[RMDB]
RNA sequence: GGGAACGACUCGAGUAGAGUCGAAAACGAGCUCAGUUCGCUGAGCUCGAAAAAAGCGUACUACCAUGGAGUUUAUGUCUACCCACCUCCCAAAUAGGAGAGGACAUGAAACGAUGAAGUGGUAUCGCAAAAAGAGUCUUGGUUCGCCAAGACUCAAGAGUAACGACUGAUUCGUCAGUCGUUACUCAAAAGAAACAACAACAACAAC
Reactivity to DMS in 0.01 (KOAc 150mM, MgCl2 10mM, bicine 150mM(pH8.5), 24C), signal-to-noise 1, nucleotides 027 to 156: c000g000a020g020c000u010c000a020g020u000u000c300g020c000u000g000a070g000c000u060c000g020a000a020a020a080a030a130g020c030g010u010a030c100u000a040c030c000a020u000g000g000a240g040u000u000u000a000u030g010u000c000u000a010c060c030c010a300c170c000u020c000c000c030a120a050a110u010a110g010g010a040g040a300g010g000a020c020a060u000g000a040a000a050c000g000a090u010g010a090a230g010u000g000g020u000a060u000c010g000c000a050a040a050a140a120g000a000g010u000c000u020u010g010g030u000u020c300g060c000c000a010a020g000a000c000u010c000a000a130
Reactivity to 2A3 in 0.01 (KOAc 150mM, MgCl2 10mM, bicine 150mM(pH8.5), 24C), signal-to-noise 4, nucleotides 027 to 156: c010g000a000g000c000u000c000a020g050u120u140c260g050c090u000g010a000g000c000u000c000g010a000a000a000a000a000a000g040c030g010u040a060c030u020a000c010c000a000u020g010g000a060g030u020u000u000a010u000g010u020c000u060a280c000c000c030a020c000c000u050c000c020c030a230a290a150u210a170g010g000a010g000a010g000g020a000c000a000u300g150a050a010a010c030g300a300u050g040a050a020g000u010g000g010u030a050u190c040g000c070a010a070a020a030a090g000a000g000u010c000u000u010g030g030u050u090c210g070c060c000a000a000g020a000c000u000c000a010a010